[RMDB]
RNA sequence: GGGAACGACUCGAGUAGAGUCGAAAAAUUACGCGAUCGUGCAUGCACUACGCCUGCCGCUGUGUAACGAUAUUUUGGCAUGGUGGCACUUCUUUAAAAACGUCCUAGAUAUCGUCAGGCAUUGCCAGACGUCGCAUUAUUUCGAUAAUGCGACGUCAAAAGAAACAACAACAACAAC
Reactivity to 2A3 in 0.01 (KOAc 150mM, MgCl2 10mM, bicine 150mM(pH8.5), 24C), signal-to-noise 6, nucleotides 027 to 126: a010u230u130a080c060g030c040g070a090u070c060g070u090g040c040a040u100g020c000a020c110u150a040c100g010c010c000u040g000c000c010g010c020u030g020u000g040u080a140a010c050g020a080u050a120u200u200u100u150g060g000c020a010u040g020g030u020g030g000c030a060c030u150u090c010u050u220u190a080a140a030a020a040c010g040u010c010c010u000a020g010a040u050a010u110c050g010u030c060a050g040g000c030a080u000u220g020c000c010a020
Reactivity to DMS in 0.01 (KOAc 150mM, MgCl2 10mM, bicine 150mM(pH8.5), 24C), signal-to-noise 1, nucleotides 027 to 126: a210u090u010a090c060g010c060g000a080u020c030g010u000g030c080a060u000g000c110a220c030u000a090c100g000c060c010u000g040c020c020g000c080u000g000u000g030u000a080a070c080g010a030u070a030u000u000u010u090g050g020c000a050u000g000g070u020g000g000c090a120c160u000u000c010u060u000u000a020a010a110a070a060c140g000u000c000c010u000a080g010a050u000a000u030c000g000u000c030a010g020g060c000a170u000u000g000c020c080a150